[RMDB]
RNA sequence: GGGAACGACUCGAGUAGAGUCGAAAAGCGUGAGUACAGUUCAACGUGGCACCACGAUGAGAACCACCCAUAUAGAACCUGGAACUAUCACGGCAGUUAUGAUGUGAAGCCCACAGGCUCCGCUAGCUCGCUGGUCAAUGGAGUGGUUAGGCUCCUCCCCCUCUUAACUGUUCGCAGUUAAGAGGGGAAAAGAAACAACAACAACAAC
Reactivity to 2A3 in 0.01 (KOAc 150mM, MgCl2 10mM, bicine 150mM(pH8.5), 24C), signal-to-noise 6, nucleotides 027 to 156: g040c020g020u040g010a100g030u090a110c070a110g020u070u150c080a130a030c090g060u060g040g030c060a030c070c010a010c050g080a110u110g040a010g010a050a010c010c000a020c020c010c020a020u150a000u020a100g080a070a060c010c010u040g050g020a040a020c020u020a040u210c060a010c080g040g000c030a000g010u050u070a150u250g170a170u070g050u030g120a130a030g060c010c020c000a030c030a020g010g010c000u010c010c000g010c010u000a010g010c000u010c070g130c050u030g000g050u040c020a030a040u040g000g010a140g050u010g000g020u020u020a060g070g000c010u020c000c000u060c000
Reactivity to DMS in 0.01 (KOAc 150mM, MgCl2 10mM, bicine 150mM(pH8.5), 24C), signal-to-noise 2, nucleotides 027 to 156: g010c030g020u000g000a110g050u000a280c050a100g000u010u020c120a090a100c110g060u020g040g000c070a090c070c030a030c040g000a160u020g020a150g010a060a020c010c030a060c020c010c010a090u010a170u000a070g020a040a100c020c000u000g020g010a090a050c040u010a130u010c080a080c020g000g000c060a050g000u000u000a130u010g010a090u000g010u010g020a060a110g030c090c010c020a150c100a070g000g010c000u000c010c060g020c060u000a060g000c000u000c090g000c040u000g030g040u000c050a150a090u000g010g010a100g020u000g020g000u000u010a040g020g000c040u000c020c000u010c010